RNA sequence: GGGAACGACUCGAGUAGAGUCGAAAAGCGCGUAGGUUCAGAUGAUGGGCCCGCAUCUGUACGAAAGCAAGACGAAAGUCCAGCCUACGUGCAUGAGCACGCGGGCCCCGUGCUCUACAGCAAAAGAGCCAUAGGAGGAUUUCGAUCCUCCUAUGGCAAAAGAAACAACAACAACAAC
Reactivity to 2A3 in 0.01 (KOAc 150mM, MgCl2 10mM, bicine 150mM(pH8.5), 24C), signal-to-noise 3, nucleotides 027 to 126: g010c000g000c000g010u010a000g000g020u070u100c100a030g020a080u040g000a040u050g030g000g000c000c000c000g000c000a000u000c000u040g080u080a060c080g130a150a100a020g060c040a080a010g020a000c000g030a100a100a000g020u000c010c000a000g000c000c000u000a000c000g000u000g000c000a020u080g000a000g000c030a020c020g000c070g000g010g000c000c000c000c000g000u000g000c000u000c000u020a070c080a080g080c030a050a080a030a000g080a050
Reactivity to DMS in 0.01 (KOAc 150mM, MgCl2 10mM, bicine 150mM(pH8.5), 24C), signal-to-noise 2, nucleotides 027 to 126: g000c000g040c000g000u000a000g050g000u000u000c030a060g000a060u020g000a000u000g000g000g010c000c000c040g000c020a000u000c000u010g030u010a050c020g000a090a100a200g010c040a050a090g030a040c000g060a120a040a150g000u000c000c110a080g020c000c010u000a050c000g030u000g000c000a040u050g000a110g000c030a070c000g000c060g000g020g020c010c000c000c000g000u000g040c050u000c030u000a030c190a200g000c100a090a040a120a070g000a220